The data come from the RNA Mapping Database (RMDB), library OK1LIB. Structure probing data (DMS and 2A3) for a 177-nucleotide construct. 2A3 adducts were read by reverse transcription with SuperScript II with manganese. The RNA was probed in 150 mM KOAc, 10 mM MgCl2 and 150 mM bicine (pH 8.5) at 24 C. Reactivities are given for positions 27 through 126.
[RMDB]
RNA sequence: GGGAACGACUCGAGUAGAGUCGAAAACUAUAGGGAUGAUCUUCCCAUUGAUGAUCAGCAUAACUGGCGGUGGAUACCUUCUGUAUUCCUGGUUACUUAUUCCUCGAGAAAUCGGACAUUAAAAGGGCCAUAUUUAAUUAUUCGUAAUUAAAUAUGGAAAAGAAACAACAACAACAAC
Reactivity to DMS in 0.01 (KOAc 150mM, MgCl2 10mM, bicine 150mM(pH8.5), 24C), signal-to-noise 5, nucleotides 027 to 126: c050u000a100u030a090g020g000g010a060u000g010a040u010c070u000u000c000c030c020a130u060u030g000a060u020g020a030u010c030a080g010c100a070u020a080a070c100u000g000g000c040g010g010u000g000g000a120u010a080c020c030u010u000c070u000g000u020a080u000u010c040c000u010g000g000u010u020a070c040u010u030a090u010u000c000c010u010c020g010a060g000a030a070a080u010c020g020g010a060c110a090u020u010a050a080a060a070g000g000g030
Reactivity to 2A3 in 0.01 (KOAc 150mM, MgCl2 10mM, bicine 150mM(pH8.5), 24C), signal-to-noise 9, nucleotides 027 to 126: c030u060a060u210a240g040g010g050a060u080g040a060u060c040u040u030c020c000c020a050u040u150g050a060u030g010a020u040c020a010g050c020a050u060a170a080c030u060g030g000c030g010g060u050g030g030a040u100a130c020c000u080u090c050u130g060u050a090u030u050c000c010u030g050g000u050u020a040c010u030u040a050u100u050c000c020u050c020g030a040g020a070a100a030u070c040g040g020a030c030a090u130u210a080a060a070a090g050g050g020